[RMDB]
RNA sequence: GGGAACGACUCGAGUAGAGUCGAAAAUACGAUAGGUUCUCAAUUACAAUAGAAAAAAGAGUAACCAAUGCGAGAUCGCCUCGCUAUGGUGAGCCUGAGAUCUAUAAGGUGUCGCCAGGUGACAAUGUUCAACCUUACUUAAUCCACCACACGAGAAUCUAGUAGGAGAUUUCGAUCUCCUACUAGAAAAAGAAACAACAACAACAAC
Reactivity to DMS in 0.01 (KOAc 150mM, MgCl2 10mM, bicine 150mM(pH8.5), 24C), signal-to-noise 2, nucleotides 027 to 156: u010a090c090g010a210u000a090g020g000u000u000c010u020c010a110a110u000u000a130c070a130a150u010a120g000a000a040a080a120a100a200g000a190g070u010a130a070c000c010a040a300u000g050c010g020a010g000a260u000c220g030c140c010u000c000g040c030u000a050u000g010g030u000g010a300g020c080c000u020g000a120g010a090u000c090u000a050u010a120a110g000g000u010g010u010c050g030c070c090a020g010g040u020g010a040c050a020a120u010g000u010u000c020a050a080c040c010u000u000a100c030u020u010a080a060u000c030c020a080c020c030a050c080a040c030g000a120g000a100a170
Reactivity to 2A3 in 0.01 (KOAc 150mM, MgCl2 10mM, bicine 150mM(pH8.5), 24C), signal-to-noise 3, nucleotides 027 to 156: u110a000c030g030a030u060a060g030g000u020u000c010u000c000a010a090u200u110a070c070a060a090u150a140g130a060a110a000a030a010a020g060a010g040u070a010a010c020c000a000a040u060g010c010g000a000g010a070u100c070g030c040c010u000c000g000c000u020a070u060g010g000u010g010a000g040c000c010u040g020a060g010a090u010c040u080a060u030a170a060g070g000u050g050u050c030g020c060c010a010g000g030u030g020a030c060a140a160u180g020u070u060c030a070a080c040c000u050u080a070c010u050u170a090a050u050c040c010a050c020c040a030c060a020c040g060a070g030a080a030

Notes
Chemical mapping of a 207-nucleotide RNA with DMS and 2A3. For DMS the reverse transcriptase was MarathonRT. For 2A3, 2,088 sequencing reads were counted. The RNA was probed in 150 mM KOAc, 10 mM MgCl2 and 150 mM bicine (pH 8.5) at 24 C. For 2A3 the reverse transcriptase was SuperScript II with manganese. Values are in units of 0.01, from 0 to 300, in steps of 10. The data come from the RNA Mapping Database (RMDB), library OK3TST.